This 177-nucleotide RNA was probed chemically with DMS and 2A3. For DMS the reverse transcriptase was MarathonRT. For 2A3, 2,799 sequencing reads were counted. For DMS, 2,572 sequencing reads were counted. Reactivities are given for positions 27 through 126. It was measured as part of the RMDB library OK1LIB. Reactivities are rounded to 0.1 and cut off at 0 and 3.
[RMDB]
RNA sequence: GGGAACGACUCGAGUAGAGUCGAAAAUAGAACAUGCUUUUAAUGCUGGUUUAGCUACAGCUUUAGCAGCAGAAGUAAUUGAAGCAUUAAAAUAUUCAACUAUGGAUGCUCCAUAUAGUGAGCCAUGCAGUAUAGCUCGGUUCGCCGAGCUAUACUGAAAAGAAACAACAACAACAAC
Reactivity to DMS in 0.01 (KOAc 150mM, MgCl2 10mM, bicine 150mM(pH8.5), 24C), signal-to-noise 2, nucleotides 027 to 126: u010a040g010a030a190c290a050u000g000c000u000u010u000u010a130a030u000g040c000u000g000g000u010u010u000a000g000c000u080a160c300a250g030c060u000u000u020a040g000c120a010g000c010a050g000a120a130g010u040a010a040u000u030g000a020a050g000c000a000u020u030a020a010a010a170u010a100u030u000c060a030a090c130u020a030u000g000g000a140u050g010c050u000c010c050a120u030a040u000a120g020u020g020a020g030c000c070a050u020g010
Reactivity to 2A3 in 0.01 (KOAc 150mM, MgCl2 10mM, bicine 150mM(pH8.5), 24C), signal-to-noise 4, nucleotides 027 to 126: u140a020g100a080a040c010a010u020g000c030u000u040u080u220a070a040u040g000c000u000g000g300u020u050u030a010g000c030u130a190c060a100g000c000u010u000u010a010g000c010a000g010c010a030g040a140a060g060u170a070a160u080u160g050a000a000g000c010a000u000u160a010a010a100a030u170a100u050u150c100a080a040c060u070a040u110g120g030a090u120g060c020u020c010c020a090u190a030u040a190g190u250g110a000g000c000c000a030u150g020